About this RNA: Chemical mapping of a 170-nucleotide RNA with 2A3 and DMS. DMS adducts were read by reverse transcription with MarathonRT.
[RMDB]
RNA sequence: GGGAACGACUCGAGUAGAGUCGAAAAGUCGGUGAUCCUGCCUCUCCCUGUCGGUGAAUCCUCCCCUGAGAGGCCUCUUCCUAGGUCCGGAGUCUACCUCCAUCUGGUCUGUUCGGGCCCUCUUCGCAUCGUUAACGGUUCGCCGUUAACAAAAGAAACAACAACAACAAC
Reactivity to 2A3 in 0.01 (KOAc 150mM, MgCl2 10mM, bicine 150mM(pH8.5), 24C), signal-to-noise 9, nucleotides 027 to 129: g080u060c040g000g050u070g040a130u060c000c020u040g030c000c000u010c000u020c000c020c020u040g120u080c070g030g040u080g090a060a090u060c000c000u020c000c000c000c010u030g030a050g000a030g050g000c000c000u030c010u020u010c010c010u040a040g000g030u000c030c030g010g000a020g020u020c050u100a100c020c010u020c010c000a060u030c040u050g020g040u010c030u040g080u070u100c020g000g010g000c010c020c010u030c020u060u080c050g040c050a120u090c100
Reactivity to DMS in 0.01 (KOAc 150mM, MgCl2 10mM, bicine 150mM(pH8.5), 24C), signal-to-noise 9, nucleotides 027 to 129: g020u010c040g020g020u000g020a060u040c020c020u000g000c070c030u020c040u000c040c030c000u000g030u030c070g020g010u040g000a110a110u040c020c010u000c000c000c010c020u030g000a070g020a060g020g030c050c020u020c040u030u000c040c030u010a070g000g050u000c050c060g000g000a050g030u030c080u040a170c100c010u020c020c040a080u000c060u000g050g030u030c040u000g030u030u010c110g000g010g020c020c020c020u010c030u040u030c080g000c120a100u030c120
Reactivities are given for positions 27 through 129. The RNA was probed in 150 mM KOAc, 10 mM MgCl2 and 150 mM bicine (pH 8.5) at 24 C. For 2A3, 100,536 sequencing reads were counted.